[RMDB]
RNA sequence: GGGAACGACUCGAGUAGAGUCGAAAAAUAGACAAAAGGAAAUUAAGUAUAUCCAGGACUGGGCUUCCAGAAUCAGCUCAUAUGACAUUCUCAAAGUUUCCUUUAAAUGGGGGAUAUAUUGAAGAGAAAAUAGACAUAGGUUCGCCUAUGUCUAUUUAAAAGAAACAACAACAACAAC
Reactivity to DMS in 0.01 (KOAc 150mM, MgCl2 10mM, bicine 150mM(pH8.5), 24C), signal-to-noise 3, nucleotides 027 to 126: a110u000a110g010a170c100a060a040a020a040g010g010a020a030a030u000u010a040a110g020u000a020u000a040u010c020c020a120g010g000a070c130u000g010g010g000c060u010u000c070c050a170g010a090a070u000c110a020g010c010u000c020a080u010a060u000g000a070c130a080u010u000c010u000c010a060a070a110g010u000u000u000c000c000u000u000u000a030a050a130u010g010g020g000g010g020a030u000a020u000a010u000u000g020a100a130g000a100g000a090
Reactivity to 2A3 in 0.01 (KOAc 150mM, MgCl2 10mM, bicine 150mM(pH8.5), 24C), signal-to-noise 1, nucleotides 027 to 126: a000u000a040g090a050c060a030a070a000a000g000g030a010a000a020u120u060a090a130g010u020a030u020a000u160c060c030a020g050g040a070c030u030g020g010g000c000u080u030c070c030a050g160a020a110u120c000a000g000c000u000c040a040u060a080u230g020a050c050a040u080u030c040u030c000a070a100a000g000u010u000u070c000c000u030u120u180a060a130a100u180g030g000g000g000g030a000u000a000u000a030u090u120g050a210a030g080a010g030a060